[RMDB]
RNA sequence: GGGAACGACUCGAGUAGAGUCGAAAAUUGUUGCUCUACUGGGUUGCGAUCGAGCUUAGCCUCGUUCAUUUUUUUAUACAACAGCCCGUUAAAAACAGUAGACAGGCCGCUUUAGCUCUUAUUUAAGAAUAAGGUCCAGGUUCGCCUGGACCUUAUUAAAAGAAACAACAACAACAAC
Reactivity to DMS in 0.01 (KOAc 150mM, MgCl2 10mM, bicine 150mM(pH8.5), 24C), signal-to-noise 1, nucleotides 027 to 126: u070u040g000u010u000g000c080u000c040u000a000c020u000g000g000g000u000u000g000c100g020a140u000c000g010a020g000c060u040u010a110g000c020c000u000c010g080u050u030c050a000u000u060u000u060u000u080u100a080u020a280c090a050a240c040a130g000c030c000c020g000u030u040a070a140a130a010a100c090a080g000u000a050g000a100c170a040g010g020c000c020g010c060u000u000u000a060g000c050u000c070u000u000a070u020u010u010a160a150g010